RNA sequence: GGGAACGACUCGAGUAGAGUCGAAAAACAAAAGAAAGUGGUGUACCAUUACAAACUUCAAGAUACAUUAGCAUUGGUUAUGGAUCAAAACCUUUGAUUCUAGUUAAGGAAGCACAAGGUAAAGGGUUCAAAACUUUAGAAAAAAGUGAUCCUAGUCACCCCUCUAUCAUUUCGAUGAUAGAGGGGUAAAAGAAACAACAACAACAAC
Reactivity to DMS in 0.01 (KOAc 150mM, MgCl2 10mM, bicine 150mM(pH8.5), 24C), signal-to-noise 1, nucleotides 027 to 156: a110c040a120a100a100a110g030a140a130a070g050u020g000g040u000g030u000a040c010c010a140u040u000a290c050a040a070a060c080u000u000c040a090a080g020a080u000a030c030a040u010u000a130g000c000a100u000u010g030g000u000u000a090u010g040g000a030u000c000a070a050a120a080c030c000u000u000u000g000a040u010u000c030u010a120g030u000u030a080a200g030g000a030a060g020c000a110c250a050a030g040g010u010a050a060a140g020g020g000u000u000c070a070a020a060a100c010u000u000u010a060g030a010a090a090a060a110a060g000u000g000a010u000c070c000u010a140g000u030c080
Reactivity to 2A3 in 0.01 (KOAc 150mM, MgCl2 10mM, bicine 150mM(pH8.5), 24C), signal-to-noise 2, nucleotides 027 to 156: a000c050a040a050a000a000g090a080a040a000g020u040g030g040u050g010u030a030c030c030a010u080u080a090c120a090a110a050c040u120u150c070a010a010g050a140u070a050c050a060u080u070a050g030c050a050u020u110g000g050u060u100a080u120g010g020a010u030c020a000a070a020a150c020c000u010u010u020g010a010u050u000c020u040a040g070u100u120a130a060g010g000a030a020g010c020a020c020a060a010g050g010u040a080a050a040g100g010g000u030u000c000a000a010a080a080c000u080u130u120a090g100a030a050a100a000a000a000g020u010g010a010u040c000c000u010a020g090u060c080